[RMDB]
The record gives the reactivity of an RNA of 177 nucleotides to DMS and 2A3. Source: RMDB library OK2TST, as collected in RNAgym.
RNA sequence: GGGAACGACUCGAGUAGAGUCGAAAACAAUGAUGAUAACAGUUUAAAUAUUGGUGCACGUCACAUUACAGUAUCAACAUCAGGUAUCAUUCCUAGAAUAUAUGACUUUGCGGAUGAAGAUAUCCAACAAUGUGGACUGUUUCGACAGUCCACAUUGAAAAGAAACAACAACAACAAC
Reactivity to DMS in 0.01 (KOAc 150mM, MgCl2 10mM, bicine 150mM(pH8.5), 24C), signal-to-noise 3, nucleotides 027 to 126: c110a150a130u000g000a060u000g010a060u010a110a100c040a100g020u000u010u000a070a090a070u000a070u000u030g000g060u000g010c030a090c150g010u020c060a020c070a130u000u010a150c050a070g000u000a050u000c050a030a110c050a050u000c090a040g010g020u000a020u000c080a120u010u000c050c020u010a120g010a070a090u000a090u020a050u000g020a050c110u000u010u000g030c120g020g000a050u010g000a130a130g010a070u000a030u000c020c030a040a260
Reactivity to 2A3 in 0.01 (KOAc 150mM, MgCl2 10mM, bicine 150mM(pH8.5), 24C), signal-to-noise 3, nucleotides 027 to 126: c040a020a110u130g020a030u030g010a020u040a140a050c040a060g060u050u140u140a110a100a050u170a060u120u120g060g000u040g040c080a050c220g090u100c150a010c010a060u040u260a060c050a020g000u020a030u030c020a050a040c000a060u060c030a010g030g040u040a020u090c020a020u040u010c000c000u000a040g090a120a020u190a030u000a030u110g100a080c050u100u110u120g080c090g020g010a020u050g040a020a070g020a120u150a030u150c000c000a000a040
For 2A3, 2,117 sequencing reads were counted. Reactivities are rounded to 0.1 and cut off at 0 and 3. 2A3 adducts were read by reverse transcription with SuperScript II with manganese.